Structure probing data (2A3) for a 207-nucleotide construct. For 2A3, 872 sequencing reads were counted. The reactions ran in a buffer of 150 mM KOAc, 10 mM MgCl2 and 150 mM bicine (pH 8.5), at 24 C. Source: RMDB library PDB130, as collected in RNAgym. Reactivities are given for positions 27 through 156. Values are in units of 0.01, from 0 to 300, in steps of 10.
RNA sequence: GGGAACGACUCGAGUAGAGUCGAAAAGCUGCACGCGUGCUACACUGAUAUAUAUAACGAGUUUUUAAAAAUAUGCUUAUAUUUGUAUCUUUGAUGCUUAUAUUUUGCAUACUUUUCCUCCGCCGAAAGGCGUAGGUAAUCUUUAUCAAUAUAUAUCGUGAGUUAACUACUUCGGUAGUUAACUCACAAAAGAAACAACAACAACAAC
Reactivity to 2A3 in 0.01 (KOAc 150mM, MgCl2 10mM, bicine 150mM(pH8.5), 24C), signal-to-noise 2, nucleotides 027 to 156: g040c020u090g010c030a040c050g080c030g080u040g000c010u060a050c030a030c050u020g010a010u000a000u010a010u010a000u030a130a020c020g010a010g030u060u010u110u300u300a050a120a000a010a030u020a010u000g000c000u010u010a010u010a020u000u010u020g020u000a000u010c000u080u130u300g010a000u020g000c010u030u000a010u000a000u020u250u030u020g000c000a000u010a020c010u060u060u070u010c000c000u050c030c010g000c010c010g090a080a020a040g000g020c010g000u000a000g010g000u030a060a040u050c010u010u100u050a100u250c000a040a020u010a020u020a020u040a000u110c020